[RMDB]
RNA sequence: GGGAACGACUCGAGUAGAGUCGAAAACGGCGCCAGUCUGCCAGCCGCGUGCCGAACAUGAGGCCCCGGGUCGGAGGGCCUCCGGCCGAAAACGCUGGCAGCACGCGGAUGCGGGCGUCUGGAUGCGGUACGGAAAGUGUUUCGACACUUUCCGUACAAAAGAAACAACAACAACAAC
Reactivity to 2A3 in 0.01 (KOAc 150mM, MgCl2 10mM, bicine 150mM(pH8.5), 24C), signal-to-noise 4, nucleotides 027 to 126: c040g000g000c010g000c020c000a030g060u130c000u000g000c000c000a010g010c030c030g030c040g040u210g000c000c000g030a100a090c160a230u220g010a010g020g000c000c000c000c000g170g020g080u160c120g050g090a170g090g000g000c010c000u020c000c000g000g000c000c000g040a120a090a010a000c050g000c000u020g000g000c000a000g000c020a010c000g000c000g080g070a100u300g010c000g020g000g000c000g000u030c060u080g050g000a030u120g060c090g050
Reactivity to DMS in 0.01 (KOAc 150mM, MgCl2 10mM, bicine 150mM(pH8.5), 24C), signal-to-noise 1, nucleotides 027 to 126: c020g000g000c020g010c000c030a120g000u040c000u000g030c000c010a010g000c000c070g050c000g000u030g010c000c000g000a130a070c160a210u050g010a000g000g000c020c000c000c050g000g000g030u020c110g040g060a180g010g000g000c040c000u000c000c000g010g010c010c000g020a060a100a070a070c300g000c000u000g000g030c000a000g000c000a070c000g000c010g000g010a030u020g020c030g000g000g000c010g040u010c010u010g000g000a120u020g000c080g000